[RMDB]
RNA sequence: GGGAACGACUCGAGUAGAGUCGAAAAGAUAUGGACCUCAGGCUGACAUGAAACGGUUCGGAAACGAACCCGGUUUCAACAGCAGCUGAGGUCCUAAGUCAAAGGUGGUUAGUUCGCUAACCACCAACACAUAUCACACGUUCGCGUGUGAUAUGUGAAAAGAAACAACAACAACAAC
Reactivity to DMS in 0.01 (KOAc 150mM, MgCl2 10mM, bicine 150mM(pH8.5), 24C), signal-to-noise 6, nucleotides 027 to 126: g000a030u000a140u010g000g010a010c000c000u000c000a040g020g020c010u000g010a050c120a170u020g010a010a010a020c030g010g010u000u000c010g030g010a050a020a060c000g010a010a010c030c060c300g020g020u000u000u000c000a080a100c170a180g010c000a020g000c000u000g000a020g010g000u000c000c000u000a000a050g000u000c030a110a120a130g010g040u010g010g010u000u000a000g010u010u020c260g010c000u000a000a000c000c000a000c000c010a030a060
Reactivity to 2A3 in 0.01 (KOAc 150mM, MgCl2 10mM, bicine 150mM(pH8.5), 24C), signal-to-noise 5, nucleotides 027 to 126: g010a010u030a010u060g000g010a000c000c000u010c020a110g300g130c030u020g020a120c070a300u240g000a000a000a010c010g000g000u020u000c000g010g010a020a030a020c000g000a000a010c000c050c040g210g050u020u010u000c110a260a130c150a180g040c000a010g000c000u010g000a000g000g010u000c000c000u000a000a000g000u000c000a050a050a080g000g010u000g010g000u000u010a010g000u040u080c290g040c210u000a000a000c000c000a000c000c000a000a000

The data come from the RNA Mapping Database (RMDB), library TTRDES. This 177-nucleotide RNA was probed chemically with DMS and 2A3. DMS adducts were read by reverse transcription with MarathonRT. 2A3 adducts were read by reverse transcription with SuperScript II with manganese.